[RMDB]
RNA sequence: GGGAACGACUCGAGUAGAGUCGAAAAGUUCUGGUGGUGAUGGCAUUGGAGAAUGGGGCUUAGGCAAGCCUGUAGGUGAGGAAUGGCUGAACACCCUGAGCCAGAUGUUUAUCUUGAUUGUAAAGACCAGGAUUGCAUAAUUCGUUAUGCAAUCCUGAAAAGAAACAACAACAACAAC
Reactivity to 2A3 in 0.01 (KOAc 150mM, MgCl2 10mM, bicine 150mM(pH8.5), 24C), signal-to-noise 5, nucleotides 027 to 126: g030u030u000c020u010g040g010u050g030g010u060g010a050u040g020g030c020a040u030u090g060g030a050g060a070a130u110g010g060g000g020c020u020u030a030g050g000c060a030a000g010c010c000u030g030u060a090g000g130u140g090a020g000g050a090a070u100g030g010c000u010g010a030a020c050a100c030c000c000u020g010a000g040c010c010a020g020a090u080g040u060u150u100a090u020c030u050u100g070a170u080u070g020u110a080a060a070g030a020c030
Reactivity to DMS in 0.01 (KOAc 150mM, MgCl2 10mM, bicine 150mM(pH8.5), 24C), signal-to-noise 6, nucleotides 027 to 126: g010u000u010c020u010g000g020u000g010g020u010g000a060u010g020g010c060a080u020u010g000g010a100g000a090a070u020g010g020g010g020c060u000u010a090g000g010c150a100a060g000c030c010u000g010u000a090g020g000u020g010a100g010g010a130a060u010g010g000c020u000g000a080a130c200a120c140c010c030u000g000a070g010c020c020a110g000a050u010g000u000u010u020a070u010c050u000u000g000a100u020u010g000u010a070a070a080g010a100c220
Structure probing data (2A3 and DMS) for a 177-nucleotide construct. Reactivities are given for positions 27 through 126. Source: RMDB libraries RFM100 and RFMREP, as collected in RNAgym. Conditions: 150 mM KOAc, 10 mM MgCl2 and 150 mM bicine (pH 8.5), 24 C.